The record gives the reactivity of an RNA of 207 nucleotides to 2A3.
RNA sequence: GGGAACGACUCGAGUAGAGUCGAAAAGGGGUCCGAGUCCCUCGUACCUACCCACCGCUAUGAACUACUUCUGAAGCCUCCACGGAAGCAUAGCGAGGGUACGACUACUCGGACGGAGGCACCCAAAGUCCCUUGGCGAUUCGUCGCCAAGGGACAACCCAGAGGAAUAGUUCGCUAUUCCUCUGGGAAAAGAAACAACAACAACAAC
Reactivity to 2A3 in 0.01 (KOAc 150mM, MgCl2 10mM, bicine 150mM(pH8.5), 24C), signal-to-noise 1, nucleotides 027 to 156: g050g010g020g010u030c010c000g000a000g020u030c040c000c000u030c010g010u010a010c010c000u060a110c080c110c020a050c040c020g000c000u020a010u050g020a140a140c100u200a120c000u300u020c000u020g010a050a010g010c010c010u000c000c010a000c030g020g000a000a010g030c010a010u000a000g010c020g000a030g010g000g000u000a000c000g010a000c020u050a010c000u000c000g010g000a000c000g000g000a010g000g030c000a080c020c010c000a090a080a000g010u010c000c020c000u000u000g000g010c010g000a010u010u060c220g050u040c000g250c000c000a000a000g000g000g000a000c000a000a000
The reactions ran in a buffer of 150 mM KOAc, 10 mM MgCl2 and 150 mM bicine (pH 8.5), at 24 C.